An RNA of 207 nucleotides, treated with DMS and 2A3 and read out base by base. For DMS, 9,977 sequencing reads were counted. 2A3 adducts were read by reverse transcription with SuperScript II with manganese. The reactions ran in a buffer of 150 mM KOAc, 10 mM MgCl2 and 150 mM bicine (pH 8.5), at 24 C. Values cover nucleotides 27 to 156.
[RMDB]
RNA sequence: GGGAACGACUCGAGUAGAGUCGAAAAAUUGAGUUCGCUCAAUCCUAGCGUACUACAAUUGGCAUCUGGGCGCGAUAAGCGAGGUCCCAAAUAGGACCUCGCUUUUGACGCGUUAGAUGAACUACCAAUUGUAUCGCCGAGCCUACAUUCGUGUAGGAAGUCCUAAUAAAUUCGUUUAUUAGGACUUAAAAGAAACAACAACAACAAC
Reactivity to DMS in 0.01 (KOAc 150mM, MgCl2 10mM, bicine 150mM(pH8.5), 24C), signal-to-noise 3, nucleotides 027 to 156: a090u000u000g010a130g000u000u000c200g000c020u000c030a060a110u000c040c030u000a060g010c030g020u010a050c080u000a010c000a020a020u000u000g010g000c000a050u000c010u000g030g020g020c000g010c000g020a110u010a020a020g030c000g040a030g040g030u000c000c000c020a050a160a290u010a040g000g030a030c000c000u000c000g000c000u000u000u000u000g000a080c040g000c010g000u000u000a010g010a050u000g010a090a100c020u010a160c000c000a000a020u000u000g000u000a010u000c010g020c010c030g000a140g020c010c010u000a020c010a070u000u010c250g030u000g010u000a000g000g000
Reactivity to 2A3 in 0.01 (KOAc 150mM, MgCl2 10mM, bicine 150mM(pH8.5), 24C), signal-to-noise 3, nucleotides 027 to 156: a000u010u010g010a010g040u090u160c160g020c090u010c010a030a040u020c020c040u030a020g000c000g040u100a150c030u000a010c040a000a000u000u010g000g000c000a000u000c010u050g110g050g000c010g000c010g010a040u010a070a000g000c000g010a000g000g000u050c030c040c060a090a160a080u270a030g000g000a020c000c000u000c000g000c030u010u000u010u020g010a000c000g000c010g010u010u010a000g000a000u000g010a040a010c050u140a080c130c000a000a010u000u000g000u000a050u300c030g010c010c030g070a020g040c000c000u000a000c000a050u080u200c180g080u080g000u030a000g010g000